[RMDB]
RNA sequence: GGGAACGACUCGAGUAGAGUCGAAAAACGCUCUACGGAGCGAACUUAGGUACCAAUUUGGCCACAAUGGGUUAGAACACUAUUCCAUUGUGUUCUUACCCACCAUGGCCAAAAUUGGGCCUAAGAAUGUGACAUUAACCUUCGGGUUAAUGUCACAAAAAGAAACAACAACAACAAC
Reactivity to 2A3 in 0.01 (KOAc 150mM, MgCl2 10mM, bicine 150mM(pH8.5), 24C), signal-to-noise 4, nucleotides 027 to 126: a000c000g010c000u020c010u030a090c300g120g000a000g000c000g000a060a000c000u000u010a000g050g000u170a300c000c000a000a000u000u000u000g020g000c020c000a050c030a100a090u020g000g000g000u000u010a000g000a000a000c000a000c030u030a090u270u250c100c120a140u130u100g010u000g000u000u000c000u010u020a000c000c000c010a000c000c010a010u020g000g000c000c000a010a010a010a010u000u000g000g000g000c000c000u000a000a000g000a000a040
Reactivity to DMS in 0.01 (KOAc 150mM, MgCl2 10mM, bicine 150mM(pH8.5), 24C), signal-to-noise 2, nucleotides 027 to 126: a090c010g000c030u000c000u000a120c080g040g030a040g000c000g000a040a090c000u000u000a040g010g000u000a040c000c000a020a000u000u000u000g010g000c000c040a020c090a100a050u030g000g000g030u000u010a010g010a000a000c000a020c000u020a110u020u020c300c280a110u030u000g000u000g040u000u010c000u000u000a010c000c020c030a000c160c050a190u010g000g000c000c000a010a020a020a060u000u000g000g000g000c000c000u020a000a030g000a180a070